[RMDB]
RNA sequence: GGGAACGACUCGAGUAGAGUCGAAAAUGACAUUUUUUAUUCAACGAAGAGUUAACCACUCUUAAUAAUAAUGGGUUUUAUAGCGAAAUAGACUUUUUUAUCGCGUGUUCAAUAUUUGCGUUAGUUAUCGUUUAGAUGGUUUCGACCAUCUAAACGAAAAAGAAACAACAACAACAAC
Reactivity to DMS in 0.01 (KOAc 150mM, MgCl2 10mM, bicine 150mM(pH8.5), 24C), signal-to-noise 2, nucleotides 027 to 126: u020g020a130c040a040u000u000u000u000u000u000a010u020u000c240a080a120c180g030a020a030g020a020g000u000u000a090a130c150c120a280c000u000c000u000u010a040a080u020a060a030u010a020a030u010g000g000g000u000u000u020u020a060u030a100g000c080g000a010a060a030u000a070g000a110c050u000u020u010u050u030u010a070u000c030g000c060g030u000g000u000u020c090a050a080u020a070u010u000u000g020c120g000u000u020a050g000u040u000a060
Reactivity to 2A3 in 0.01 (KOAc 150mM, MgCl2 10mM, bicine 150mM(pH8.5), 24C), signal-to-noise 2, nucleotides 027 to 126: u170g000a040c020a040u000u000u000u030u270u130a300u250u080c150a070a090c130g170a000a080g030a000g010u000u030a000a030c000c000a010c000u000c000u030u220a050a040u020a010a000u080a100a060u120g030g020g000u060u070u040u000a070u020a000g170c020g000a000a050a080u030a110g130a170c050u050u150u100u000u000u100a000u000c000g010c000g010u080g070u120u000c050a090a060u060a100u220u220u090g060c070g010u010u070a010g010u000u100a200